RNA sequence: GGGAACGACUCGAGUAGAGUCGAAAACAUACUCAGGAGAUCAAAACCCCAGGUGCUUCCACUACACCACUCUCUAAGAUAAGGUCAGCUAAUUAAGCUUUCGGGCCCAUACCCCGAACAUGACGGUUAAAAUCCCUCCCUUGUCAAUGAACCCCUAGCUGCAUUAUUAGUUCGCUAAUAAUGCAGCAAAAGAAACAACAACAACAAC
Reactivity to 2A3 in 0.01 (KOAc 150mM, MgCl2 10mM, bicine 150mM(pH8.5), 24C), signal-to-noise 2, nucleotides 027 to 156: c020a020u120a040c010u050c060a040g090g030a060g070a150u110c060a140a140a190a210c000c020c030c000a020g020g040u010g030c030u120u070c060c020a050c070u050a020c040a010c020c020a020c010u070c000u000c000u050a070a080g020a050u020a020a040g020g000u000c000a000g010c030u010a040a130u300u010a300a000g020c000u030u020u010c000g030g010g000c020c020c010a110u200a110c000c040c010c010g010a000a000c000a030u060g020a020c030g000g000u060u060a020a080a010a080u010c030c000c000u010c000c000c050u000u000g020u000c010a040a010u040g010a020a060c010c000c010c020u000a020
Reactivity to DMS in 0.01 (KOAc 150mM, MgCl2 10mM, bicine 150mM(pH8.5), 24C), signal-to-noise 1, nucleotides 027 to 156: c010a050u020a090c090u000c030a080g000g010a110g040a190u020c060a080a110a140a240c030c010c020c080a200g030g030u000g070c040u030u000c070c170a190c000u040a020c020a020c020c000a100c050u000c040u000c020u000a120a100g030a070u000a080a060g000g000u000c070a030g020c050u000a060a110u000u020a050a100g000c030u000u000u020c010g000g010g040c010c010c160a160u000a100c300c000c010c010g020a020a060c060a120u000g040a100c070g000g000u010u020a120a040a300a160u000c000c000c010u000c060c000c000u000u010g000u010c020a100a090u000g010a100a240c040c000c060c000u000a210